[RMDB]
RNA sequence: GGGAACGACUCGAGUAGAGUCGAAAAUUAUUAUUUGAUGGCGUAACGAUGCUGCAAUGGCGUAAGACAUCUAACAAGAUCAAGUAAAUUAGCGAGCAACGAAUUUUAGCUUAUUGGGUUGGGAGUCGAUAGUAGCUGACUUCGGUCAGCUACUAUCAAAAGAAACAACAACAACAAC
Reactivity to DMS in 0.01 (KOAc 150mM, MgCl2 10mM, bicine 150mM(pH8.5), 24C), signal-to-noise 1, nucleotides 027 to 126: u000u010a140u000u000a030u000u010u010g010a060u000g000g030c300g000u010a070a130c270g010a040u000g000c040u010g000c040a230a150u020g020g000c050g070u000a050a040g060a160c050a000u000c010u000a230a010c010a050a300g000a030u000c010a000a000g000u000a020a010a210u000u010a140g020c010g010a090g040c040a080a010c150g020a040a140u000u000u000u000a100g000c030u000u000a060u000u000g020g010g020u000u000g000g000g000a100g000u000c140